Structure probing data (DMS and 2A3) for a 177-nucleotide construct.
The RNA was probed in 150 mM KOAc, 10 mM MgCl2 and 150 mM bicine (pH 8.5) at 24 C.
For 2A3, 6,668 sequencing reads were counted.
[RMDB]
RNA sequence: GGGAACGACUCGAGUAGAGUCGAAAAAUUAACCCAGCCUAAAUGAAGAGCAGGACAAAAGGUUCGUCUGCAAACACUCCAUGGUAGACAGAGGAUGGGGAAUUGGAUGUGGACUAUUUGGAAGUAAAUGAGAAUGAUAGUUCGCUAUCAUUCUCAUAAAAGAAACAACAACAACAAC
Reactivity to DMS in 0.01 (KOAc 150mM, MgCl2 10mM, bicine 150mM(pH8.5), 24C), signal-to-noise 7, nucleotides 027 to 126: a090u010u010a120a140c010c000c000a140g000c050c030u010a040a080a090u010g000a090a070g010a090g010c050a030g010g000a060c080a070a080a090a100g010g010u010u000c090g010u000c020u000g010c030a050a040a150c060a070c040u000c020c030a030u000g010g010u010a060g020a070c120a070g000a080g000g000a050u000g000g000g000g010a070a110u000u000g010g010a140u000g010u000g000g010a050c060u000a070u000u000u010g010g000a040a080g010u010a040a070
Reactivity to 2A3 in 0.01 (KOAc 150mM, MgCl2 10mM, bicine 150mM(pH8.5), 24C), signal-to-noise 5, nucleotides 027 to 126: a000u070u050a040a050c000c010c000a010g000c000c020u110a170a140a100u200g070a060a070g020a010g060c040a030g000g060a040c030a020a150a020a020g060g010u050u060c050g020u020c030u020g010c010a020a070a010c030a010c030u020c010c000a020u040g100g070u130a050g030a070c060a030g080a030g110g010a020u040g000g010g020g030a010a090u120u080g020g020a020u040g020u020g030g000a000c020u040a110u130u100u090g070g040a090a030g020u110a100a200